Conditions: 150 mM KOAc, 10 mM MgCl2 and 150 mM bicine (pH 8.5), 24 C. Chemical mapping of a 177-nucleotide RNA with 2A3 and DMS.
[RMDB]
RNA sequence: GGGAACGACUCGAGUAGAGUCGAAAAACAGAGUAGAGCCUAUCAAGUCUGCGGCAUGAAAAAAAGCGCGAUGUAAGUAAAGGAGGGGGAAUAUUUACAUCGCGUUGCCAACUUAUGACAGAACAUCGAUGAUUAGUCCUUUCGAGGACUAAUCAUCAAAAGAAACAACAACAACAAC
Reactivity to 2A3 in 0.01 (KOAc 150mM, MgCl2 10mM, bicine 150mM(pH8.5), 24C), signal-to-noise 6, nucleotides 027 to 126: a000c050a010g030a010g060u190a020g030a050g080c000c020u130a140u140c070a130a030g020u000c010u020g030c010g010g000c010a060u190g150a060a040a000a010a000a000a010g020c010g000c000g010a000u010g000u000a000a000g000u010a040a180a180g180g090a180g010g030g040g000g040a040a010u030a010u010u000u010a000c000a000u000c000g000c000g000u010u000g000c000c000a030a020c030u140u120a070u190g030a040c020a040g050a070a040c050a100u120c100
Reactivity to DMS in 0.01 (KOAc 150mM, MgCl2 10mM, bicine 150mM(pH8.5), 24C), signal-to-noise 3, nucleotides 027 to 126: a110c070a130g040a100g000u010a080g000a090g000c050c020u040a130u020c120a080a140g000u000c000u020g000c140g000g000c030a050u030g000a010a010a110a040a070a100a150g000c010g000c000g020a000u000g010u010a000a020g010u010a020a070a080g030g000a150g020g020g000g010g030a100a300u000a000u000u000u000a010c000a000u000c010g000c000g000u000u010g000c020c020a020a140c110u050u000a060u030g000a040c050a130g010a050a130c160a060u020c090